[RMDB]
RNA sequence: GGGAACGACUCGAGUAGAGUCGAAAAAGCUAAAGAAAUGCAAAAUGUUCCAUAUACAAUUGCAGUAGAUGGCAUUAUGGCUUUCAAUCAAUCUUACUUAAAUUUACCAAAAGAUAGCCAAUUAUCACGAUCACACCCUGUUCGCAGGGUGUGAUCGAAAAGAAACAACAACAACAAC
Reactivity to 2A3 in 0.01 (KOAc 150mM, MgCl2 10mM, bicine 150mM(pH8.5), 24C), signal-to-noise 1, nucleotides 027 to 126: a030g010c000u000a000a000a000g070a010a170a080u240g000c000a160a160a000a000u000g000u030u150c010c000a000u080a070u000a040c160a080a080u080u300g040c090a000g000u070a000g020a030u040g000g000c000a000u000u090a050u100g120g000c000u000u050u030c010a000a000u050c030a000a020u000c100u050u020a150c080u000u240a260a000a000u200u170u060a210c050c000a070a070a000a000g020a000u000a000g070c000c000a000a000u030u290a150u200c110a000